[RMDB]
RNA sequence: GGGAACGACUCGAGUAGAGUCGAAAAGAUAUGGACAUGUUCUGCUUUUGACGAGAGGCAAUCGGAAACGAUUGCGCUCUCGAUAAGCAGGCAUGUCCUAAGUCAAAGCGGUCGUUCGCGACCGCAAGCUAAUAUGCGAGUUCGCUCGCAUAUUAGCAAAAGAAACAACAACAACAAC
Reactivity to DMS in 0.01 (KOAc 150mM, MgCl2 10mM, bicine 150mM(pH8.5), 24C), signal-to-noise 4, nucleotides 027 to 126: g000a040u010a300u020g000g010a010c000a000u000g000u010u010c010u000g010c000u000u010u010u020g010a290c170g000a010g010a020g000g000c010a000a000u000c000g010g000a150a080a260c000g000a010u000u000g000c000g020c000u000c000u010c000g020a050u000a000a000g010c000a010g000g000c000a000u000g010u000c000c000u000a020a080g000u000c030a090a180a220g000c000g000g000u000c010g010u010u010c260g010c020g010a010c000c000g010c000a010a020
Reactivity to 2A3 in 0.01 (KOAc 150mM, MgCl2 10mM, bicine 150mM(pH8.5), 24C), signal-to-noise 3, nucleotides 027 to 126: g020a010u070a050u170g000g010a000c010a000u030g030u300u300c060u000g020c020u140u130u130u300g300a220c050g000a000g000a000g010g020c010a000a000u010c010g030g040a060a050a040c000g000a000u010u010g000c020g020c010u000c000u000c000g000a000u000a000a010g010c010a000g000g010c000a000u000g000u000c000c000u000a000a000g010u010c040a050a050a080g000c000g010g000u010c010g030u070u160c290g010c010g190a000c000c010g000c000a000a000
Source information:
Structure probing data (DMS and 2A3) for a 177-nucleotide construct. The DMS profile rests on 6,577 reads. The data come from the RNA Mapping Database (RMDB), library TTRDES.